Structure probing data (2A3 and DMS) for a 177-nucleotide construct. Reactivities are given for positions 27 through 126.
RNA sequence: GGGAACGACUCGAGUAGAGUCGAAAAGCAUAGUUGUACGAGAAGGUACGGUGCGAUUCUCGCGUCAUGAAAACGAGGCAUGCAAGUUAAAAUGCUUGUAUUGUCUUGGAAAAUGGCGAUAUGCGAACCCAAUUAAUUUGUUCGCAAAUUAAUUGGGAAAAGAAACAACAACAACAAC
Reactivity to 2A3 in 0.01 (KOAc 150mM, MgCl2 10mM, bicine 150mM(pH8.5), 24C), signal-to-noise 9, nucleotides 027 to 126: g010c010a010u050a060g130u100u280g020u040a020c020g020a030g100a300a050g190g030u060a050c050g050g040u090g020c040g030a100u030u000c010u010c010g020c000g000u000c000a000u020g080a030a090a050a100c010g000a000g000g000c000a000u000g000c000a000a000g010u090u180a240a190a110a090u300g010c000u000u000g000u010a070u080u200g000u000c000u000u000g010g030a020a020a010a010u010g000g000c010g010a030u030a050u140g050c040g040a060a060
Reactivity to DMS in 0.01 (KOAc 150mM, MgCl2 10mM, bicine 150mM(pH8.5), 24C), signal-to-noise 9, nucleotides 027 to 126: g000c010a020u000a040g010u010u010g010u020a300c000g000a050g020a040a050g010g040u020a080c070g020g010u010g000c030g010a130u000u000c010u010c010g010c020g030u000c000a010u000g000a070a080a100a150c010g010a000g000g000c000a000u000g000c000a000a000g000u000u030a070a100a150a100u050g000c000u000u000g000u000a000u030u010g020u010c000u010u000g000g000a030a110a200a010u000g020g000c000g010a300u010a020u010g000c030g000a100a130

The 2A3 profile rests on 25,234 reads. The RNA was probed in 150 mM KOAc, 10 mM MgCl2 and 150 mM bicine (pH 8.5) at 24 C. It was measured as part of the RMDB library OK1LIB.